[RMDB]
Annotation: Conditions: 150 mM KOAc, 10 mM MgCl2 and 150 mM bicine (pH 8.5), 24 C. The record gives the reactivity of an RNA of 207 nucleotides to DMS and 2A3. It was measured as part of the RMDB library OK3TST. The DMS profile rests on 2,831 reads. For 2A3 the reverse transcriptase was SuperScript II with manganese.
RNA sequence: GGGAACGACUCGAGUAGAGUCGAAAAUGGUUGCCUGUUUGCUUUGCAAGAUAUCAAAGCAGUAACGCUUAUGACACCUAUUUUUCAGGGUCAUAUGUCUGUUCAGAAGUAGAUGAAUACUCAAUGUCGGUAAGAACAUUAAAUGGCAAUUUUAUCAGUUGGCACUACUAUUCGUAGUAGUGCCAACAAAAGAAACAACAACAACAAC
Reactivity to DMS in 0.01 (KOAc 150mM, MgCl2 10mM, bicine 150mM(pH8.5), 24C), signal-to-noise 2, nucleotides 027 to 156: u020g010g020u000u000g020c000c030u020g030u010u000u020g010c020u000u000u020g030c120a130a170g000a100u000a130u000c020a040a040a060g040c020a120g070u000a060a060c110g000c010u000u000a030u020g010a010c040a150c010c020u000a270u000u030u000u010u010c160a020g000g010g030u020c010a040u000a000u000g010u020c010u010g020u010u000c060a140g020a060a150g030u000a110g000a070u010g010a070a190u020a050c040u000c090a050a090u000g020u000c030g030g020u010a090a200g000a120a070c010a060u000u000a020a060a110u000g000g010c050a070a100u000u000u000u000a090u000c100a180
Reactivity to 2A3 in 0.01 (KOAc 150mM, MgCl2 10mM, bicine 150mM(pH8.5), 24C), signal-to-noise 3, nucleotides 027 to 156: u080g020g010u010u020g000c020c030u080g030u060u090u050g000c020u000u030u010g020c110a170a020g070a280u200a030u210c000a000a010a010g000c020a020g020u070a070a000c030g000c010u020u000a000u000g010a000c010a300c120c050u060a190u070u260u040u160u230c080a000g000g020g000u000c000a020u000a000u000g030u010c110u120g020u050u000c020a020g010a090a010g050u080a000g020a130u090g070a120a120u010a140c050u040c090a010a030u120g010u040c020g030g000u070a040a050g040a040a010c020a040u140u170a090a100a120u040g000g020c010a010a010u000u060u020u080a160u140c010a030